[RMDB]
RNA sequence: GGGAACGACUCGAGUAGAGUCGAAAAACGCUUCACAAUGUGCGGCAAAGAAACAUUGUUUAUGCAAAGGCACUUCGCUAUGUGUGCUCAAACAUUGCUUAUUCAAACACGCUUCACAAUGUGCGACAAAACUUCACGGUCUUCGGACCGUGAAGAAGCUACAAUUAGACUUCGGUCUAAUUGUAGCAAAAGAAACAACAACAACAAC
Reactivity to DMS in 0.01 (KOAc 150mM, MgCl2 10mM, bicine 150mM(pH8.5), 24C), signal-to-noise 2, nucleotides 027 to 156: a110c040g010c030u000u000c060a050c000a040a000u010g020u000g000c000g020g010c010a170a120a150g080a080a020a030c000a040u010u010g030u000u000u000a090u010g030c030a070a190a080g020g010c030a050c040u010u000c150g050c150u010a100u010g020u000g030u000g020c030u000c060a080a160a040c030a030u000u000g010c010u010u000a100u020u000c080a110a090a040c090a070c090g000c020u000u000c120a150c070a080a060u010g010u000g000c020g010a150c070a070a060a060a090c000u000u000c000a020c020g030g000u000c000u000u020c300g070g000a040c000c000g030u000g000a000a000g010a050a070
Reactivity to 2A3 in 0.01 (KOAc 150mM, MgCl2 10mM, bicine 150mM(pH8.5), 24C), signal-to-noise 8, nucleotides 027 to 156: a000c040g000c030u060u030c010a000c010a010a060u010g000u010g010c020g030g010c060a060a100a060g080a050a120a020c030a040u000u020g060u040u050u040a070u090g030c020a030a050a080g020g000c010a020c020u170u170c170g050c200u150a150u210g080u010g030u010g010c010u060c110a090a110a020c040a090u040u040g000c010u090u080a080u090u100c050a020a070a040c060a020c140g010c010u050u070c030a000c010a060a110u070g020u020g030c040g070a050c080a010a100a030a020c000u000u000c000a000c000g000g000u000c000u010u010c030g100g010a000c000c000g000u000g000a000a000g000a000a000